[RMDB]
The data come from the RNA Mapping Database (RMDB), libraries RFM100 and RFMREP. Structure probing data (2A3 and DMS) for a 177-nucleotide construct. Values cover nucleotides 27 to 126. 2A3 adducts were read by reverse transcription with SuperScript II with manganese.
RNA sequence: GGGAACGACUCGAGUAGAGUCGAAAAUAGAUGUUAUGAUGACGAGUCGGUCGGCUCCGCGCUAGGUUUGGUCGCCUAGGGGAUGGAGAUAUGGAAAGGGUCUCGUGUGCUGUCAGUCGGUCGAAAGAAGGAUAAGUCUAUUCGUAGACUUAUCCUUAAAAGAAACAACAACAACAAC
Reactivity to 2A3 in 0.01 (KOAc 150mM, MgCl2 10mM, bicine 150mM(pH8.5), 24C), signal-to-noise 8, nucleotides 027 to 126: u140a010g110a060u070g060u200u080a100u200g100a050u070g020a030c030g030a020g060u040c010g010g010u010c010g010g000c010u000c010c000g010c010g020c030u020a010g030g030u050u040u120g070g010u070c030g000c020c000u020a020g000g020g020g020a050u100g050g010a030g010a040u070a090u100g050g030a040a030a050g070g010g010u000c010u010c050g050u070g040u040g020c030u050g030u060c010a020g020u030c020g040g010u010c010g050a050a070a050g170
Reactivity to DMS in 0.01 (KOAc 150mM, MgCl2 10mM, bicine 150mM(pH8.5), 24C), signal-to-noise 9, nucleotides 027 to 126: u030a080g010a090u010g010u010u010a060u020g010a080u010g000a100c050g000a070g010u010c030g010g010u010c050g010g010c020u000c020c020g010c060g010c020u010a020g000g010u000u010u010g010g020u010c150g000c010c010u000a030g000g000g020g030a090u010g000g010a040g000a070u020a080u020g000g010a060a080a100g000g000g000u010c020u000c050g010u010g020u010g010c040u000g000u010c050a070g020u000c050g010g000u010c050g000a070a090a120g010
The RNA was probed in 150 mM KOAc, 10 mM MgCl2 and 150 mM bicine (pH 8.5) at 24 C.